The record gives the reactivity of an RNA of 170 nucleotides to 2A3 and DMS. The data come from the RNA Mapping Database (RMDB), library 15KLIB. The 2A3 profile rests on 8,208 reads.
RNA sequence: GGGAACGACUCGAGUAGAGUCGAAAAAAAACAGUGUUGCACUGCUGCUGUUGAUUUAAGUAUGGAUAAGUUGCGCCGUGUGGAUUGGAAAUCAACCCUACGGUUGUUACUUAUGUUAUGCACAACUGAAACUUCGAGUUCGCUCGAAGUAAAAGAAACAACAACAACAAC
Reactivity to 2A3 in 0.01 (KOAc 150mM, MgCl2 10mM, bicine 150mM(pH8.5), 24C), signal-to-noise 5, nucleotides 027 to 129: a000a000a000a000c060a000g000u090g050u150u110g020c040a080c220u120g040c070u060g020c020u010g020u020u010g060a190u050u100u130a110a040g000u000a010u050g000g000a020u010a010a010g020u000u040g040c000g020c010c010g030u090g060u090g040g020a120u010u020g030g080a070a090a070u300c000a000a010c000c010c010u000a010c000g000g030u090u200g010u050u000a010c000u010u010a020u010g090u110u030a010u020g000c000a000c020a150a040c030u120g010a070a090
Reactivity to DMS in 0.01 (KOAc 150mM, MgCl2 10mM, bicine 150mM(pH8.5), 24C), signal-to-noise 4, nucleotides 027 to 129: a050a030a020a060c010a040g030u000g000u050u030g010c070a080c100u040g030c090u000g040c000u020g000u000u000g020a070u000u000u000a130a080g040u050a000u000g000g000a050u000a050a020g000u050u010g020c000g000c050c040g030u020g030u000g020g030a120u000u000g040g000a060a070a060u000c010a020a010c000c010c030u050a000c010g030g020u000u090g070u000u000a000c010u000u050a020u030g000u080u000a050u000g030c030a100c160a080a040c080u030g020a120a080
The DMS profile rests on 33,215 reads.